[RMDB]
RNA sequence: GGGAACGACUCGAGUAGAGUCGAAAAAGGAAGCUUCUGGCGGCAGCGUCUCAACGAGCUCAGGCCUUUGUCAACGGGCACGUACCGGUGGUGCCAACUUAUCGUGUUCGCCCAGGCCUGUAGUUACAAUUACCUCGGUUUUCGAACCGAGGUAAUUAAAAGAAACAACAACAACAAC
Reactivity to DMS in 0.01 (KOAc 150mM, MgCl2 10mM, bicine 150mM(pH8.5), 24C), signal-to-noise 5, nucleotides 027 to 126: a060g000g000a100a070g000c030u000u000c040u010g000g030c040g020g000c060a050g020c060g040u000c040u020c060a100a110c190g010a100g000c040u000c010a020g000g010c010c020u010u000u030g020u020c150a130a180c060g010g010g000c000a020c030g000u020a110c160c120g010g010u000g010g010u010g020c110c070a060a050c090u010u020a080u030c030g010u000g010u000u030c050g000c060c080c180a060g010g000c010c020u000g000u040a030g010u020u000a050c160
Reactivity to 2A3 in 0.01 (KOAc 150mM, MgCl2 10mM, bicine 150mM(pH8.5), 24C), signal-to-noise 5, nucleotides 027 to 126: a000g070g010a030a030g020c050u060u040c020u080g050g020c000g010g020c010a020g020c000g080u050c010u010c040a060a110c030g090a020g020c010u000c010a010g000g020c000c020u040u090u100g170u090c040a050a030c050g010g000g000c010a010c080g010u030a060c000c070g030g040u040g010g060u110g080c040c030a040a060c050u170u180a060u160c040g010u020g000u070u010c010g000c010c010c000a000g000g010c000c000u020g010u040a010g010u010u070a080c060
Record summary:
Structure probing data (DMS and 2A3) for a 177-nucleotide construct. The RNA was probed in 150 mM KOAc, 10 mM MgCl2 and 150 mM bicine (pH 8.5) at 24 C. DMS adducts were read by reverse transcription with MarathonRT.